An RNA of 177 nucleotides, treated with DMS and read out base by base. Values cover nucleotides 27 to 126. The RNA was probed in 150 mM KOAc, 10 mM MgCl2 and 150 mM bicine (pH 8.5) at 24 C.
RNA sequence: GGGAACGACUCGAGUAGAGUCGAAAAGAAAGAAAGAAAGAUUAGAUAAGAACUCUCUCACUCCAGCCAGAGCCACCAACUCAGGGCUGGAAAGUAAAAAACCGACGCAAAGUCGGUUUUUUUACAACUUAUCCAUCUAUUUCGAUAGAUGGAUAAGAAAAGAAACAACAACAACAAC
Reactivity to DMS in 0.01 (KOAc 150mM, MgCl2 10mM, bicine 150mM(pH8.5), 24C), signal-to-noise 1, nucleotides 027 to 126: g060a140a110a120g010a040a110a090g000a010a130a040g000a060u000u030a140g000a230u040a160a180g010a120a070c130u000c060u000c040u020c030a110c130u000c000c000a040g000c000c000a110g010a000g000c020c010a300c140c030a070a230c000u020c000a060g030g010g000c000u000g000g000a020a010a030g000u000a010a000a000a010a000a000c000c010g030a020c000g000c140a060a080a120g010u000c020g000g000u000u000u000u020u010u000u000a000c000a050a180